About this RNA: The record gives the reactivity of an RNA of 177 nucleotides to DMS and 2A3. For 2A3 the reverse transcriptase was SuperScript II with manganese. Reactivities are given for positions 27 through 126.
RNA sequence: GGGAACGACUCGAGUAGAGUCGAAAACGGCGCAGCGGAGUCUGGUGGAGCGCGCGGUGAAGCAGUGGCGCACUGGACUGUUUGCGAUGGCCCGGCAGUUCGCCUUUUUCUUCAUGUCUUGCCACCAAAAUCGAUAUAUCUUCGGAUAUAUCGAUUUAAAAGAAACAACAACAACAAC
Reactivity to DMS in 0.01 (KOAc 150mM, MgCl2 10mM, bicine 150mM(pH8.5), 24C), signal-to-noise 7, nucleotides 027 to 126: c120g010g000c020g010c040a100g010c050g020g010a060g010u010c030u000g000g010u010g000g010a180g010c030g000c040g000c010g010g010u010g010a090a100g010c120a090g010u000g000g010c030g010c060a040c040u010g000g000a050c030u010g000u020u020u010g010c040g000a080u030g010g000c010c010c040g000g010c090a060g000u020u010c030g010c020c010u020u000u020u010u010c030u020u010c080a070u010g000u010c030u010u020g010c040c020a100c070c080a070
Reactivity to 2A3 in 0.01 (KOAc 150mM, MgCl2 10mM, bicine 150mM(pH8.5), 24C), signal-to-noise 9, nucleotides 027 to 126: c040g030g000c020g000c030a040g020c020g040g050a040g030u020c030u040g030g010u030g020g050a190g030c040g000c010g000c010g030g110u200g100a110a030g030c090a050g020u040g060g010c010g000c020a000c010u010g000g010a010c000u020g090u100u150u230g040c060g040a090u070g050g010c000c000c000g020g000c020a040g030u040u050c020g030c000c000u040u080u020u030u030c020u050u040c030a050u090g040u030c010u040u070g030c010c010a050c020c020a060